[RMDB]
RNA sequence: GGGAACGACUCGAGUAGAGUCGAAAACCGUAGGCGUCGUGCCAUUUCAACAGCUAUAGGGAACCGCAUAUUCGAAAGAGUAUGCUCAGUACCUAUAGACAUGAAAGGCGGACGACGCCUAAACGGAAACGAUUGUACACUUCGGUGUACAAUCGAACCAGCGGUAAUUGUUCGCAAUUACCGCUGGAAAAGAAACAACAACAACAAC
Reactivity to 2A3 in 0.01 (KOAc 150mM, MgCl2 10mM, bicine 150mM(pH8.5), 24C), signal-to-noise 2, nucleotides 027 to 156: c000c000g010u010a000g010g020c000g010u000c000g040u010g120c050c080a300u030u000u000c090a140a100c080a060g040c000u000a000u020a000g000g040g020a030a000c000c010g000c000a000u000a010u010u000c000g080a120a090a040g010a030g020u010a010u000g000c010u000c000a000g010u000a000c020c000u000a000u000a020g010a020c000a000u010g000a000a010a010g040g020c060g110g090a060c000g000a000c000g000c000c000u000a010a030a000c010g050g030a060a140a020c020g000a000u000u010g010u020a000c010a010c000u040u120c300g080g000u020g000u020a000c000a000a000u000c000g020a000a020

This 207-nucleotide RNA was probed chemically with 2A3. As a SHAPE reagent, 2A3 marks flexible, mostly unpaired nucleotides at the ribose 2'-OH. It was measured as part of the RMDB library RNAMAK. The 2A3 profile rests on 2,013 reads. The reactions ran in a buffer of 150 mM KOAc, 10 mM MgCl2 and 150 mM bicine (pH 8.5), at 24 C. For 2A3 the reverse transcriptase was SuperScript II with manganese.